Structure probing data (DMS and 2A3) for a 207-nucleotide construct. The RNA was probed in 150 mM KOAc, 10 mM MgCl2 and 150 mM bicine (pH 8.5) at 24 C. For DMS, 1,536 sequencing reads were counted. Values cover nucleotides 27 to 156.
RNA sequence: GGGAACGACUCGAGUAGAGUCGAAAAAUGCGCCUAUCAGAUUCAGCACACCAUGGUAUGGAAGGACAAUUUAUAAAUGACCAUGAUACUUCGAAACCUUAUGGUUUUGUAGCAGGCAUAUACGGUGACGAACAUUCAGAAAGAUUCUGUUACAAGACUCCUUGUUGCUAUUCGUAGCAACAAGGAGAAAAGAAACAACAACAACAAC
Reactivity to DMS in 0.01 (KOAc 150mM, MgCl2 10mM, bicine 150mM(pH8.5), 24C), signal-to-noise 1, nucleotides 027 to 156: a080u000g040c020g010c050c010u020a170u000c050a100g000a110u020u000c090a110g070c040a090c130a090c030c010a000u000g050g090u000a130u000g000g020a130a090g040g010a120c030a050a080u000u000u000a120u000a090a020a130u010g000a080c020c000a100u000g000a160u000a040c080u000u010c030g000a120a030a050c110c000u010u000a070u000g060g070u000u000u000u020g030u000a010g000c000a010g020g060c060a020u000a090u020a070c060g000g000u020g040a120c070g020a090a060c020a120u020u000c060a130g020a070a080a140g060a140u000u030c000u000g000u000u020a090c060a040a090g000a180
Reactivity to 2A3 in 0.01 (KOAc 150mM, MgCl2 10mM, bicine 150mM(pH8.5), 24C), signal-to-noise 4, nucleotides 027 to 156: a000u080g010c050g040c020c030u070a060u110c050a020g060a080u050u060c050a020g050c030a060c010a010c040c020a040u070g030g010u060a030u110g050g040a030a050g010g020a020c020a120a090u130u190u080a150u160a070a120a120u110g020a010c010c060a030u030g060a020u060a080c030u030u060c030g090a080a060a040c030c000u140u200a100u180g000g000u030u010u060u030g020u000a020g010c050a020g050g000c020a020u040a000u020a090c070g040g000u060g060a050c040g010a070a000c020a070u170u180c030a070g170a090a130a000g070a130u100u000c010u020g040u020u010a010c020a070a060g060a080
It was measured as part of the RMDB library OK3TST.